[RMDB]
RNA sequence: GGGAACGACUCGAGUAGAGUCGAAAACAAAGUGAGAGCGCGCGUCAACGUGCAGAAGAAAUGUCACAGCAACUUAGCGCAUUGGUAGUAUCAUUGAAUGCUACGAUGCUGCGUUCGAUGUUGCGCGCCCGGUCAGGUGCUUCGGCACCUGACCGGGAAAAGAAACAACAACAACAAC
Reactivity to 2A3 in 0.01 (KOAc 150mM, MgCl2 10mM, bicine 150mM(pH8.5), 24C), signal-to-noise 1, nucleotides 027 to 126: c030a050a110a030g130u140g030a200g000a050g010c030g030c000g000c010g130u070c050a120a070c040g030u060g010c080a030g090a200a000g040a010a170a020u210g000u130c070a030c030a040g110c020a020a120c030u150u140a040g010c000g000c030a000u030u010g150g020u010a010g000u000a000u070c080a120u110u300g220a300a000u060g010c020u000a000c060g000a000u000g000c060u100g000c040g040u050u040c030g010a040u080g040u170u190g000c000g100c020g060
An RNA of 177 nucleotides, treated with 2A3 and read out base by base. Source: RMDB library OK2TST, as collected in RNAgym.